[RMDB]
RNA sequence: GGGAACGACUCGAGUAGAGUCGAAAAGGGAAGGCCAGGGAAUUUUCUUCAGAGCAGACCAGAGCCAACAGCCCCACCAGAAGAGAGCUUCAGGUCUGGGGUAGAGACAACAACUCCCCCUCAGAAGCAAUCUGCAGGGGUUCGCCCCUGCAGAUUGAAAAGAAACAACAACAACAAC
Reactivity to DMS in 0.01 (KOAc 150mM, MgCl2 10mM, bicine 150mM(pH8.5), 24C), signal-to-noise 1, nucleotides 027 to 126: g010g000g000a160a110g090g000c100c110a010g000g040g030a060a000u030u000u000u020c050u000u000c100a110g000a070g000c130a020g070a080c060c010a190g000a060g000c060c010a070a020c080a160g020c000c000c010c020a070c200c010a000g000a060a000g020a100g030a070g010c000u020u010c050a100g040g010u010c230u020g000g000g000g000u000a050g020a050g000a070c230a090a080c180a080a120c030u010c000c010c020c000c060u000c010a040g050a060a080g020
Reactivity to 2A3 in 0.01 (KOAc 150mM, MgCl2 10mM, bicine 150mM(pH8.5), 24C), signal-to-noise 2, nucleotides 027 to 126: g080g000g010a030a040g040g010c020c000a010g040g020g010a030a080u070u150u060u070c030u040u010c050a020g020a010g150c080a040g000a150c050c000a010g030a010g130c040c000a020a000c040a160g050c020c070c000c000a000c010c000a060g100a080a060g140a020g090a040g160c000u050u070c040a010g090g050u020c060u090g020g000g040g000u020a020g010a040g010a020c070a160a000c020a050a080c170u000c000c040c000c030c000u000c030a080g020a070a020g050